[RMDB]
RNA sequence: GGGAACGACUCGAGUAGAGUCGAAAAGAUAUGGACAUGAACUACAGCGUCUUGGUGGCGAAGAACUCGGAAACGAGGGAGCCAUCAACGCUGCAUGUCCUAAGUCAAAGCCGGGUUCGCCCGGCAACUUAUCUGUAACCUUCGGGUUACAGAUAAGAAAAGAAACAACAACAACAAC
Reactivity to 2A3 in 0.01 (KOAc 150mM, MgCl2 10mM, bicine 150mM(pH8.5), 24C), signal-to-noise 3, nucleotides 027 to 126: g030a020u090a030u130g000g000a000c000a010u020g020a080a080c110u220a070c300a030g000c010g020u020c100u080u060g000g000u000g000g000c030g100a300a010g020a090a060c000u000c020g030g030a070a060a040c010g010a000g000g000g020a000g000c000c000a000u000c000a010a000c000g000c000u000g000c000a000u000g000u000c010c000u020a140a030g030u030c040a100a100a050g000c010c010g030g000g000u050u110c270g120c040c010c000g010g020c010a000a000
Reactivity to DMS in 0.01 (KOAc 150mM, MgCl2 10mM, bicine 150mM(pH8.5), 24C), signal-to-noise 4, nucleotides 027 to 126: g010a060u010a300u000g010g000a000c000a000u000g000a080a070c090u040a300c020a000g020c000g010u000c130u010u000g030g070u000g000g000c000g000a120a130g000a140a180c000u010c000g010g000a150a060a210c000g000a010g000g000g000a080g000c000c000a010u000c010a010a010c010g000c000u000g000c000a000u010g000u010c010c000u000a020a070g010u000c040a090a110a180g000c000c000g000g010g030u000u010c240g010c010c000c000g000g010c020a000a010